[RMDB]
RNA sequence: GGGAACGACUCGAGUAGAGUCGAAAAAAGUGAAGUGUGAAGGCCCCUCAUACCCUCCAUCUUGCCUCAGACUAUGUCCUGGAACCCUAGAAAAGAGGGGGAAAGACCUGAGGUAAGGAAAAUGCUGCAGCUUUCCUCUGGGGAAUCCUUCAGGAAGGAUUAAAGAAGAAUUCGUUCUUCUUUAAUCAAAAGAAACAACAACAACAAC
Reactivity to DMS in 0.01 (KOAc 150mM, MgCl2 10mM, bicine 150mM(pH8.5), 24C), signal-to-noise 1, nucleotides 027 to 156: a030a060g010u010g020a060a100g030u000g000u000g010a130a210g000g000c030c000c010c050u000c010a160u010a140c000c010c000u040c010c000a100u000c030u000u000g070c030c000u000c020a000g000a170c120u010a220u030g010u010c030c000u010g040g010a290a280c000c010c010u000a050g020a130a060a140a200g010a120g000g030g020g020g010a130a090a050g000a100c040c000u010g010a070g010g030u010a030a020g010g000a050a040a080a100u010g020c030u010g010c050a120g010c010u000u010u000c020c020u000c070u000g030g000g050g010a070a080u010c000c030u000u000c040a060g010g030a110a190g000
Reactivity to 2A3 in 0.01 (KOAc 150mM, MgCl2 10mM, bicine 150mM(pH8.5), 24C), signal-to-noise 2, nucleotides 027 to 156: a080a000g080u080g040a100a040g050u080g020u040g140a050a110g080g010c060c020c040c030u020c010a140u240a230c030c010c010u000c050c010a080u050c010u000u050g010c000c000u000c000a000g020a060c050u110a130u240g010u040c040c040u000g020g000a010a010c000c000c000u010a020g240a110a080a140a050g240a090g020g000g000g000g010a010a010a000g000a000c000c000u000g000a000g000g010u000a000a000g000g040a050a020a000a050u070g010c020u080g000c010a050g010c000u050u000u020c010c000u060c030u050g010g010g000g020a030a080u080c020c000u050u030c030a070g070g020a080a030g130